[RMDB]
RNA sequence: GGGAACGACUCGAGUAGAGUCGAAAAACAAAAUGUGGAGUGACGUGGGCCUCUGCAAGAAGCGACCAAAACCUGGAGGAGGAUGGAACACUGGGGGGAGCCGAUACCCAGGACAGGCCAGAAAAAAGUCCCUUUAUAUCUUCGGAUAUAAAGGGACAAAAGAAACAACAACAACAAC
Reactivity to DMS in 0.01 (KOAc 150mM, MgCl2 10mM, bicine 150mM(pH8.5), 24C), signal-to-noise 1, nucleotides 027 to 126: a170c080a050a080a040a130u010g000u010g020g000a030g020u000g000a020c110g000u000g000g010g000c070c000u000c030u020g000c060a020a030g000a210a100g020c070g020a070c080c070a090a080a050a120c070c010u000g030g030a060g000g000a160g050g000a060u000g000g000a070a040c060a090c060u000g060g030g000g000g010g020a090g010c000c020g010a110u000a030c050c000c010a150g010g010a080c070a070g020g020c050c020a060g000a000a020a080a040a130a200

The record gives the reactivity of an RNA of 177 nucleotides to DMS. Source: RMDB library M2PK90, as collected in RNAgym. For DMS, 682 sequencing reads were counted. High DMS reactivity at an A or C suggests that its Watson-Crick edge is free. Reactivities are given for positions 27 through 126.